[RMDB]
RNA sequence: GGGAACGACUCGAGUAGAGUCGAAAACACUCAAAUCAGCUGUUGCUCGCCAAACACGCGCUCGGCGGCGUUGUAAUUGGCGGCUCGAGAGUCUUGCAAUGCCGUUACGAAUUUGAAGCUCAGGCGCCAUGCAUAGUGAGUUCGCUCACUAUGCAUGAAAAGAAACAACAACAACAAC
Reactivity to DMS in 0.01 (KOAc 150mM, MgCl2 10mM, bicine 150mM(pH8.5), 24C), signal-to-noise 4, nucleotides 027 to 126: c170a110c060u000c050a070a110a120u060c120a090g010c040u000g020u010u000g010c020u020c040g030c020c020a030a070a100c130a020c080g030c030g000c040u000c050g010g000c050g010g000c000g010u000u010g000u000a050a100u020u010g010g000c000g000g000c060u010c130g000a080g000a160g000u010c030u000u000g000c040a030a030u010g020c050c010g000u010u030a080c100g020a050a080u010u020u030g020a070a090g020c060u000c040a100g000g000c020g020c150
Reactivity to 2A3 in 0.01 (KOAc 150mM, MgCl2 10mM, bicine 150mM(pH8.5), 24C), signal-to-noise 9, nucleotides 027 to 126: c060a020c010u070c040a050a140a160u110c030a030g040c030u050g040u160u090g030c040u060c040g000c000c000a040a080a010c060a020c090g030c010g020c020u050c030g240g110c020g010g010c020g070u030u070g020u020a080a120u060u070g030g000c000g020g000c010u010c010g190a180g000a010g040u020c020u020u040g030c010a020a050u040g010c010c010g040u100u140a060c030g040a040a080u140u080u170g080a070a030g000c010u020c090a040g030g000c000g000c010